[RMDB]
RNA sequence: GGGAACGACUCGAGUAGAGUCGAAAAGCGAAAAUCGGACGGUGGCUGCAAGUCGCAUCGCAAAACCGCGGCAAGUGGAGUUAGCGAGAGGAAGCUGGGUUUUGGCUUCCUUAAGCAAUCGGUCACCAUAAGAGGAUUCGCUUCGGCGAAUCCUCAACUAUGUGUCUCACUUCGGUGAGACACAUAGAAAAGAAACAACAACAACAAC
Reactivity to 2A3 in 0.01 (KOAc 150mM, MgCl2 10mM, bicine 150mM(pH8.5), 24C), signal-to-noise 1, nucleotides 027 to 156: g040c020g030a030a000a010a100u150c080g040g050a010c070g050g000u000g030g000c020u030g000c030a010a000g020u040c030g020c010a060u010c020g000c040a020a020a020a050c030c030g000c050g100g000c140a120a050g000u040g040g080a080g020u070u110a020g030c010g010a040g010a000g030g010a000a000g000c010u050g070g080g250u170u180u130u210g020g000c010u000u000c000c020u000u010a020a000g000c020a000a000u050c010g020g000u020c010a010c000c000a000u010a050a070g010a000g010g000a000u000u010c000g000c000u000u020c100g100g000c000g000a020a010u000c000c000u000c000a000a020
Chemical mapping of a 207-nucleotide RNA with 2A3. 2A3 adducts were read by reverse transcription with SuperScript II with manganese. The data come from the RNA Mapping Database (RMDB), library M2RFPK.